[RMDB]
RNA sequence: GGGAACGACUCGAGUAGAGUCGAAAACAUAGGGAGUUCGCUCCCUAUGAAAAUGCCGGCUGCAAGAAAAGUGCUUCAAAGAGUGCGAGCACUGCCGAAAAAAAAGGGCGAUGUUCGCAUCGCCCAACUAAUGUUUAAUGUUCGCAUUAAACAUUAGAAAAGAAACAACAACAACAAC
Reactivity to 2A3 in 0.01 (KOAc 150mM, MgCl2 10mM, bicine 150mM(pH8.5), 24C), signal-to-noise 6, nucleotides 027 to 126: c000a000u010a000g000g010g000a010g020u050u060c110g090c060u000c000c000c000u000a000u000g000a000a010a000a020u060g060c030c010g010g020c020u070g030c070a060a060g050a130a140a020a020g020u010g010c000u060u060c050a100a160a100g180a100g100u100g040c060g020a000g000c000a000c020u020g000c010c010g010a120a010a010a010a000a000a010a020g000g000g010c000g000a000u000g010u050u070c190g000c090a000u000c000g000c000c000c000a000a000
Reactivity to DMS in 0.01 (KOAc 150mM, MgCl2 10mM, bicine 150mM(pH8.5), 24C), signal-to-noise 6, nucleotides 027 to 126: c010a000u000a010g000g010g000a020g010u000u010c210g010c000u000c010c000c000u000a000u000g000a030a060a080a080u000g020c090c000g010g010c030u000g010c120a070a120g000a080a070a120a100g020u000g000c010u000u000c050a070a110a130g010a130g020u010g020c120g000a040g000c010a010c030u010g010c040c030g010a010a010a000a060a060a060a130a130g000g010g010c010g010a020u000g000u000u010c180g000c010a010u000c000g010c010c000c000a010a010